[RMDB]
RNA sequence: GGGAACGACUCGAGUAGAGUCGAAAAUCACAACCAAAUGUGUCUUUGUUCCAAUCGCCGUGUAAGCCCUAUACAGAGGAUAGGCUGGUUCGCUUAAAGAGAAUCUUUUCUAUGAUCAGGUCCGAAUCAUGUUGUACAUGAGCAGGCUCCGUAAGAUAUACCUAAGUAGCUUCGGCUACUUAGGUAUAAAAGAAACAACAACAACAAC
Reactivity to DMS in 0.01 (KOAc 150mM, MgCl2 10mM, bicine 150mM(pH8.5), 24C), signal-to-noise 2, nucleotides 027 to 156: u010c070a090c070a090a290c040c040a040a140a180u020g020u000g010u000c040u000u000u010g010u000u000c020c020a070a120u000c050g000c040c010g030u020g010u010a050a070g040c000c020c040u000a140u000a110c070a250g000a110g010g020a090u000a060g010g000c080u000g010g010u000u000c030g040c060u000u020a010a130a150g020a080g010a050a060u000c020u000u000u000u000c050u000a060u010g020a070u000c060a070g010g000u000c020c020g010a080a130u000c000a030u010g020u000u000g020u000a300c040a070u000g000a080g020c040a120g000g020c000u000c020c030g060u000a050a080g000a160u000
Reactivity to 2A3 in 0.01 (KOAc 150mM, MgCl2 10mM, bicine 150mM(pH8.5), 24C), signal-to-noise 2, nucleotides 027 to 156: u090c000a000c000a070a070c050c040a070a020a090u100g040u000g040u010c050u030u090u100g070u030u070c010c020a030a060u110c050g010c040c020g020u030g030u040a080a020g020c000c000c000u120a100u040a130c050a010g100a060g130g000a040u030a040g000g080c010u010g000g030u040u050c040g040c050u080u100a080a170a000g060a010g000a020a030u040c000u010u090u040u050c040u060a110u080g040a090u140c030a020g010g010u000c000c000g020a020a050u010c000a040u020g030u060u140g110u150a040c000a030u000g010a000g060c120a030g090g000c070u030c010c000g000u020a010a050g000a010u000
Background: Chemical mapping of a 207-nucleotide RNA with DMS and 2A3. Conditions: 150 mM KOAc, 10 mM MgCl2 and 150 mM bicine (pH 8.5), 24 C. Source: RMDB library ARCHII, as collected in RNAgym. Reactivities are given for positions 27 through 156. The 2A3 profile rests on 906 reads.